Structure probing data (DMS and 2A3) for a 177-nucleotide construct. 2A3 adducts were read by reverse transcription with SuperScript II with manganese. For DMS the reverse transcriptase was MarathonRT. Conditions: 150 mM KOAc, 10 mM MgCl2 and 150 mM bicine (pH 8.5), 24 C. The 2A3 profile rests on 1,962 reads. DMS (dimethyl sulfate) methylates the pairing face of unpaired adenines and cytosines.
RNA sequence: GGGAACGACUCGAGUAGAGUCGAAAAGCCGUAGCAUCGAUGCGCAUUACGUAUACGGCAUAUAUAUUAGCAUUACGGCAUCGCGAUGCCGAUUAAUGCUAGCCGCGUAUAGCAUUAAUAUAUCGGCUGUCCCAAGUACGUUCGCGUACUUGGGACAAAAAGAAACAACAACAACAAC
Reactivity to DMS in 0.01 (KOAc 150mM, MgCl2 10mM, bicine 150mM(pH8.5), 24C), signal-to-noise 2, nucleotides 027 to 126: g000c000c000g040u010a100g000c180a030u000c030g010a000u000g040c010g010c210a300u010u000a040c060g000u010a180u000a180c060g000g010c000a120u020a100u000a090u000a090u000u020a020g000c040a030u000u000a010c010g010g000c010a010u000c100g040c300g000a060u010g000c000c010g000a050u000u000a020a000u010g010c000u000a010g010c000c020g020c020g000u000a020u000a080g000c010a010u000u010a020a050u010a040u000a140u000c040g020g010c000
Reactivity to 2A3 in 0.01 (KOAc 150mM, MgCl2 10mM, bicine 150mM(pH8.5), 24C), signal-to-noise 2, nucleotides 027 to 126: g010c030c000g030u010a000g010c090a050u050c060g020a020u020g000c030g000c040a070u060u140a000c010g040u050a150u010a290c070g010g040c030a000u050a020u030a010u000a020u080u090a010g010c010a010u000u040a010c020g020g000c000a000u040c020g030c090g120a010u040g010c030c000g030a020u000u110a000a010u000g000c000u000a040g010c010c000g030c020g050u020a020u030a030g010c010a000u020u040a120a020u070a020u000a040u150c000g010g000c020